[RMDB]
Structure probing data (DMS) for a 177-nucleotide construct.
RNA sequence: GGGAACGACUCGAGUAGAGUCGAAAAAGAAGGCGGCUCAAUGGUAUGGUGUAAUCUGACGAUUAGGCGGGAUACACACUCUUCCCCUAAUAACCUGAAAUUCUGCCUGAUUGUGGUGAGUGGCGGCCAGAACCGUACGAUUCGUCGUACGGUUCUGAAAAGAAACAACAACAACAAC
Reactivity to DMS in 0.01 (KOAc 150mM, MgCl2 10mM, bicine 150mM(pH8.5), 24C), signal-to-noise 2, nucleotides 027 to 126: a050g010a110a090g010g020c060g020g010c070u020c060a060a060u000g030g020u000a060u000g000g020u000g000u010a090a080u000c040u000g000a050c030g010a020u010u000a020g010g020c010g010g020g010a030u000a070c130a090c070a070c080u000c080u000u000c010c000c010c110u000a040a090u010a040a040c100c040u020g000a060a100a060u000u000c040u000g000c020c000u000g000a080u000u000g010u000g000g000u000g000a080g020u000g010g030c090g020g030c140

High DMS reactivity at an A or C suggests that its Watson-Crick edge is free. The RNA was probed in 150 mM KOAc, 10 mM MgCl2 and 150 mM bicine (pH 8.5) at 24 C.